[RMDB]
This 207-nucleotide RNA was probed chemically with 2A3 and DMS. The DMS profile rests on 2,122 reads. It was measured as part of the RMDB library M2RFPK. The reactions ran in a buffer of 150 mM KOAc, 10 mM MgCl2 and 150 mM bicine (pH 8.5), at 24 C.
RNA sequence: GGGAACGACUCGAGUAGAGUCGAAAAAAUGCCGCCUCAGUUCCAAGCUCUUUCGUGGCACUGUAAACAGUCCUAUUGAGUUAGGGGCAGUCAACCACGUUGCGAAGCGAAAUUAUCUGGUCGAGAGUUACGAUUCCCUACUUCGGUAGGGAAUCAAUACUCAGAUUCUGUUCGCAGAAUCUGAGUAAAAAGAAACAACAACAACAAC
Reactivity to 2A3 in 0.01 (KOAc 150mM, MgCl2 10mM, bicine 150mM(pH8.5), 24C), signal-to-noise 1, nucleotides 027 to 156: a000a030u040g020c030c000g020c010c010u030c010a050g040u050u000c020c030a070a010g020c010u000c000u040u060u040c060g010u050g040g000c140a040c000u010g040u130a020a130a090c030a050g080u020c000c010u060a060u090u140g080a100g160u010u020a030g000g000g000g000c000a010g000u020c070a050a000c020c000a030c040g010u030u080g010c030g090a120a070g020c020g020a000a000a090u260u200a080u060c120u050g040g070u020c050g010a020g000a000g100u070u030a050c050g010a020u000u010c000c010c010u000a000c010u000u020c100g070g000u000a010g010g000g010a000a000u000c000a000a000
Reactivity to DMS in 0.01 (KOAc 150mM, MgCl2 10mM, bicine 150mM(pH8.5), 24C), signal-to-noise 1, nucleotides 027 to 156: a080a060u000g000c040c020g080c010c000u000c050a080g020u000u020c020c020a100a300g000c020u010c010u030u000u000c030g020u010g000g000c040a040c010u020g000u000a070a140a070c040a050g010u010c000c000u000a060u000u000g040a200g040u010u010a040g000g020g000g020c000a070g020u000c020a080a050c000c020a040c080g060u010u000g020c120g010a170a110g020c020g020a050a050a070u020u010a050u000c080u000g010g020u010c010g010a140g000a100g000u000u010a080c090g000a010u000u020c000c000c000u000a010c020u000u000c300g030g010u000a040g030g020g000a010a000u010c010a030a070